[RMDB]
The record gives the reactivity of an RNA of 177 nucleotides to 2A3 and DMS. Values cover nucleotides 27 to 126. Conditions: 150 mM KOAc, 10 mM MgCl2 and 150 mM bicine (pH 8.5), 24 C. For DMS, 2,237 sequencing reads were counted. High 2A3 reactivity points to a flexible backbone, as in loops and unpaired stretches.
RNA sequence: GGGAACGACUCGAGUAGAGUCGAAAAGAAGGAGAUGAAAGCGACUUUAGAAUCGGCUAACUGAGCAGUCAGAUACAGACGGCAAGUAUCGUCGCCAGAGAUACAGUCGCAACUAGCCGCAGGAGAAAGCUGGUAUCAUGUUCGCAUGAUACCAGCUAAAAGAAACAACAACAACAAC
Reactivity to 2A3 in 0.01 (KOAc 150mM, MgCl2 10mM, bicine 150mM(pH8.5), 24C), signal-to-noise 3, nucleotides 027 to 126: g130a040a000g060g030a060g010a080u200g100a080a030a000g050c020g000a000c020u030u040u050a030g050a190a090u050c020g000g000c010u020a030a030c030u040g010a030g020c030a010g050u000c010a010g040a060u130a160c050a050g070a000c010g040g050c050a050a040g020u000a100u120c110g040u070c020g050c070c060a020g000a000g000a080u060a070c000a020g000u010c000g000c010a000a000c040u060a010g000c000c000g000c040a040g000g050a090g080a030a070
Reactivity to DMS in 0.01 (KOAc 150mM, MgCl2 10mM, bicine 150mM(pH8.5), 24C), signal-to-noise 2, nucleotides 027 to 126: g040a100a150g000g010a050g010a130u020g000a120a080a020g010c000g000a080c030u000u000u050a000g000a130a140u000c050g000g040c020u040a030a040c010u030g000a120g000c150a000g000u000c020a160g000a190u040a100c270a080g000a160c030g000g000c030a120a110g000u000a030u000c060g030u000c080g000c030c000a100g000a100g000a060u040a020c090a040g000u010c020g050c040a140a040c260u000a010g010c080c020g000c090a060g000g000a060g000a040a070